[RMDB]
RNA sequence: GGGAACGACUCGAGUAGAGUCGAAAAGACCGUCAGUUAGACGGAAGAAGUGCAUAAAUCCACAACGGAAGACUACAUAAUGCACAAAUGUGGAUAAGCGUACGGAUCUACGUGCGCUAAACGUGAGCACGGGUAGUCGAUUCGUCGACUACCCGUGAAAAGAAACAACAACAACAAC
Reactivity to DMS in 0.01 (KOAc 150mM, MgCl2 10mM, bicine 150mM(pH8.5), 24C), signal-to-noise 2, nucleotides 027 to 126: g010a080c000c000g010u000c010a220g000u150u060a120g020a000c000g000g000a220a150g010a090a130g040u000g000c070a060u000a050a160a040u050c000c000a040c050a090a020c230g000g000a150a100g010a070c130u000a090c190a050u050a100a070u020g030c020a040c050a040a040a090u000g090u040g000g000a100u000a120a060g050c000g020u000a010c000g010g000a070u070c190u020a000c020g040u020g000c120g010c000u000a000a000a150c100g010u000g020a050g000
Reactivity to 2A3 in 0.01 (KOAc 150mM, MgCl2 10mM, bicine 150mM(pH8.5), 24C), signal-to-noise 1, nucleotides 027 to 126: g000a030c010c000g000u000c070a160g080u030u300a200g000a000c000g080g000a050a010g070a000a000g000u050g000c000a020u120a090a150a040u110c000c000a070c120a020a210c050g040g180a030a000g060a100c020u060a030c130a140u120a030a040u150g020c000a000c000a140a190a000u150g000u030g000g000a010u000a120a030g000c070g060u000a000c000g060g000a010u010c000u120a070c020g000u020g000c020g000c000u030a090a040a000c040g050u030g160a000g090

Background
The record gives the reactivity of an RNA of 177 nucleotides to DMS and 2A3. 2A3 adducts were read by reverse transcription with SuperScript II with manganese. Conditions: 150 mM KOAc, 10 mM MgCl2 and 150 mM bicine (pH 8.5), 24 C. The data come from the RNA Mapping Database (RMDB), library OK1LIB. Values are in units of 0.01, from 0 to 300, in steps of 10. For DMS, 1,855 sequencing reads were counted.